[RMDB]
An RNA of 177 nucleotides, treated with DMS and 2A3 and read out base by base.
It was measured as part of the RMDB libraries RFM100 and RFMREP.
2A3 adducts were read by reverse transcription with SuperScript II with manganese.
2A3 is a SHAPE reagent: it acylates the 2'-hydroxyl of flexible nucleotides of all four kinds.
RNA sequence: GGGAACGACUCGAGUAGAGUCGAAAAGAAAGAAAGUUGGUUGCGAUGAUUAUAAGAAAUUCCUCGUACUGAAUGCUAUAGCCAUGGCAUGACAGACGCCUUAACACCCAUAGAAUAUGAGCACCAACGCUCUAAUGUUUUUCGAAACAUUAGAGCGAAAAGAAACAACAACAACAAC
Reactivity to DMS in 0.01 (KOAc 150mM, MgCl2 10mM, bicine 150mM(pH8.5), 24C), signal-to-noise 5, nucleotides 027 to 126: g000a080a090a080g010a080a070a100g030u000u010g000g000u000u010g050c020g000a110u030g020a140u000u000a070u020a050a090g000a070a070a190u000u020c010c010u010c010g010u010a060c030u000g010a240a030u010g000c010u010a050u010a140g020c180c130a090u000g010g020c020a010u000g000a090c070a020g010a070c040g020c090c020u010u010a060a070c120a110c030c020c040a100u040a080g000a060a040u000a040u010g000a220g000c020a030c030c020a040a060
Reactivity to 2A3 in 0.01 (KOAc 150mM, MgCl2 10mM, bicine 150mM(pH8.5), 24C), signal-to-noise 6, nucleotides 027 to 126: g140a020a070a010g150a030a120a000g020u020u010g050g000u100u130g010c040g020a050u080g030a050u090u120a070u110a140a040g090a050a100a050u050u030c010c000u030c010g010u040a110c010u010g010a030a030u040g000c010u020a020u070a110g090c070c070a020u050g020g000c010a010u040g010a020c000a010g020a020c010g020c010c000u030u020a080a020c050a070c020c010c020a070u080a070g120a060a010u140a060u200g040a020g010c010a000c030c000a000a040